Annotation:
An RNA of 177 nucleotides, treated with 2A3 and DMS and read out base by base. The DMS profile rests on 1,575 reads. For 2A3 the reverse transcriptase was SuperScript II with manganese. Values cover nucleotides 27 to 126. The 2A3 profile rests on 3,382 reads. It was measured as part of the RMDB library TTRDES. As a SHAPE reagent, 2A3 marks flexible, mostly unpaired nucleotides at the ribose 2'-OH.

RNA sequence: GGGAACGACUCGAGUAGAGUCGAAAAGAUAUGGAUGCCCUGACUCGAGGAUCAUAGGGCUCGGAAACGAGCCUAUGGGAGAGUCGCGGCAUCCUAAGUCAAACGACUCAGCUUCGGCUGAGUCGAAGUAGGAUUUAUCCUUCGGGAUAAAUCCUACAAAAGAAACAACAACAACAAC
Reactivity to 2A3 in 0.01 (KOAc 150mM, MgCl2 10mM, bicine 150mM(pH8.5), 24C), signal-to-noise 1, nucleotides 027 to 126: g020a010u050a010u060g010g000a000u000g020c000c020c060u040g020a010c010u030c010g070a300g110g000a010u010c010a000u010a020g250g090g070c000u000c000g000g020a020a030a000c000g000a010g000c000c020u000a000u000g000g000g020a060g000a000g010u000c010g030c120g010g000c030a000u010c000c000u010a000a000g000u010c020a090a070a130c010g010a000c000u000c000a010g030c050u090u170c300g240g000c010u000g000a000g000u000c000g000a020a000
Reactivity to DMS in 0.01 (KOAc 150mM, MgCl2 10mM, bicine 150mM(pH8.5), 24C), signal-to-noise 2, nucleotides 027 to 126: g010a010u000a280u030g000g010a020u000g010c000c010c100u000g020a020c000u000c000g010a080g040g010a050u010c020a010u000a050g000g040g000c000u000c010g040g010a050a050a160c010g020a020g020c020c010u000a020u000g000g000g010a000g020a020g030u000c010g000c300g010g000c010a000u010c000c000u000a000a080g000u000c050a120a130a270c020g000a040c010u000c000a020g020c000u000u020c300g030g020c000u000g000a010g020u000c010g000a000a080
Overview: For DMS the reverse transcriptase was MarathonRT.